RNA sequence: GGGAACGACUCGAGUAGAGUCGAAAACCUGGAGAGGUCUUCUGCCCUAGCCCGGUCUUCGAAGCUUCCUUUGGCUACUACCCGGUGGAAACAACUGAAGCUUCAACGCCUUUUUUUCCAAUCUUCUUUAGCACCGGGCUAGGGAGUAAGCCCGUGGGUUACCUCUACUGUUCGCAGUAGAGGUAACAAAAGAAACAACAACAACAAC
Reactivity to 2A3 in 0.01 (KOAc 150mM, MgCl2 10mM, bicine 150mM(pH8.5), 24C), signal-to-noise 2, nucleotides 027 to 156: c010c010u020g040g150a190g020a040g020g010u040c010u060u010c040u100g300c000c010c000u010a010g030c030c000c000g030g000u020c050u140u230c190g020a010a000g020c000u000u000c000c030u040u000u000g020g040c020u020a060c000u120a110c000c020c140g000g000u020g020g050a140a220a100c010a000a020c020u000g020a020a010g000c000u000u060c100a030a010c060g180c050c040u280u090u100u000u030u220u060c090c040a300a300u100c070u270u030c060u140u300u240a050g010c040a010c010c020g060g070g020c010u010a000g000g000g000a000g000u010a000a000g010c000c000c000g030u110g020g130